[RMDB]
RNA sequence: GGGAACGACUCGAGUAGAGUCGAAAAUCGAGUCGUGCAGGAACAGCCGGCUCGUCGAGCCGCACGACUGCCCGGCCCAAGUGAAGUUCAUGCCGCGAACGGCCGCGGCGACGACCUUGUCGAUGUCCGAGGGAAGUACGUUCGCGUACUUCCCUCGAAAAGAAACAACAACAACAAC
Reactivity to 2A3 in 0.01 (KOAc 150mM, MgCl2 10mM, bicine 150mM(pH8.5), 24C), signal-to-noise 1, nucleotides 027 to 126: u030c000g000a000g010u000c020g010u030g040c050a070g020g110a090a100c040a060g090c100c050g030g040c070u020c030g070u040c020g040a020g020c000c000g080c010a020c060g060a030c010u030g030c020c010c020g020g030c000c010c000a070a020g080u090g100a090a020g010u040u030c040a070u300g010c030c000g020c010g070a080a020c070g090g000c050c030g000c000g000g010c000g000a030c040g020a020c000c000u020u100g050u050c040g030a020u100g070u060c030
Reactivity to DMS in 0.01 (KOAc 150mM, MgCl2 10mM, bicine 150mM(pH8.5), 24C), signal-to-noise 2, nucleotides 027 to 126: u030c030g020a110g010u000c000g020u000g000c050a060g010g070a070a170c170a180g020c180c030g000g000c020u010c130g000u020c110g010a090g010c000c010g030c040a090c060g000a100c020u000g000c040c040c040g000g000c080c120c030a090a080g020u010g000a060a150g010u000u000c150a120u020g000c040c030g010c000g030a120a170c050g000g000c060c020g030c020g000g000c040g020a010c000g000a170c140c040u010u000g030u010c050g000a060u000g000u000c090
Structure probing data (2A3 and DMS) for a 177-nucleotide construct. The RNA was probed in 150 mM KOAc, 10 mM MgCl2 and 150 mM bicine (pH 8.5) at 24 C. Values cover nucleotides 27 to 126.